[RMDB]
RNA sequence: GGGAACGACUCGAGUAGAGUCGAAAAAGGAUCUCGAGACUGAAGGACUAGAGUCUCAGUCUCCUGAAGUCGAAGUCAGAGAGUCCUUCCUGAUCUCGAAGUCCUCUUCAGUCAGAGUCAGUCAGCUAGGAAGAGAGCUGAAGGAUCGACUCUCUUCGAGAGUCGGACCUUUCGAGGUCCGACUCUCAAAAGAAACAACAACAACAAC
Reactivity to 2A3 in 0.01 (KOAc 150mM, MgCl2 10mM, bicine 150mM(pH8.5), 24C), signal-to-noise 3, nucleotides 027 to 156: a010g040g000a000u040c020u020c000g010a010g010a000c020u010g010a040a000g020g000a010c020u080a040g020a080g140u050c030u020c100a030g040u030c020u010c010c030u110g040a100a050g100u100c090g040a060a000g050u050c020a010g070a020g020a000g100u000c000c000u030u020c020c020u120g040a300u010c000u000c010g020a070a010g030u020c010c010u040c010u110u100c020a070g040u060c020a020g020a030g070u040c010a020g020u000c000a000g000c030u040a050g080g130a070a020g110a030g000a000g010c020u040g020a060a020g080g020a070u090c000g010a010c000u000c000u020c020u250u270c050
About this RNA
The data come from the RNA Mapping Database (RMDB), library OK3TST. Chemical mapping of a 207-nucleotide RNA with 2A3. Values cover nucleotides 27 to 156. 2A3 adducts were read by reverse transcription with SuperScript II with manganese. The reactions ran in a buffer of 150 mM KOAc, 10 mM MgCl2 and 150 mM bicine (pH 8.5), at 24 C.